[RMDB]
RNA sequence: GGGAACGACUCGAGUAGAGUCGAAAAGCAUUAAGAGAGUACUCUUAUUCCCACAACGUUGGUGACAACGUUGAUUUUCCGGUGGCCACCCGCCCGGGCCACCGUUACUCCACUCCACUCCUUCGGGACUGGUUUGGAGGAACAGCAAAGGGCUAAACGUUUUAUAUGACUUCGGUCAUAUAAAACGAAAAGAAACAACAACAACAAC
Reactivity to DMS in 0.01 (KOAc 150mM, MgCl2 10mM, bicine 150mM(pH8.5), 24C), signal-to-noise 1, nucleotides 027 to 156: g020c060a110u010u010a120a110g010a090g010a270g040u010a020c040u000c020u000u020a110u010u020c020c000c000a300c020a010a030c010g010u000u000g010g010u000g010a300c030a020a030c000g000u000u000g010a030u010u000u000u000c110c050g100g040u010g010g000c000c000a050c020c000c180g000c010c020c010g000g000g000c020c040a040c000c000g020u000u000a130c020u000c000c010a040c030u010c010c010a000c040u010c010c000u020u030c300g070g010g020a070c040u010g000g020u000u010u020g030g000a060g000g020a010a030c070a160g030c130a050a080a090g000g040g000c000u020a050a120a250
Reactivity to 2A3 in 0.01 (KOAc 150mM, MgCl2 10mM, bicine 150mM(pH8.5), 24C), signal-to-noise 3, nucleotides 027 to 156: g040c030a060u090u060a020a000g020a000g040a030g200u190a210c000u000c000u010u020a020u040u000c000c010c000a000c000a000a000c000g000u010u010g000g070u100g070a050c000a000a000c000g000u000u010g020a050u080u060u100u090c060c010g010g000u000g000g010c010c020a050c050c080c080g000c010c000c000g000g000g010c000c000a000c000c000g000u010u070a010c000u000c000c000a010c000u000c000c000a000c010u010c000c000u030u100c230g060g000g000a000c010u000g000g000u010u000u000g000g000a000g000g000a010a080c050a010g140c040a110a100a050g010g000g000c000u010a010a040a000
About this RNA:
Chemical mapping of a 207-nucleotide RNA with DMS and 2A3. For 2A3 the reverse transcriptase was SuperScript II with manganese. The data come from the RNA Mapping Database (RMDB), library OK3TST. The 2A3 profile rests on 3,638 reads. As a SHAPE reagent, 2A3 marks flexible, mostly unpaired nucleotides at the ribose 2'-OH. The RNA was probed in 150 mM KOAc, 10 mM MgCl2 and 150 mM bicine (pH 8.5) at 24 C.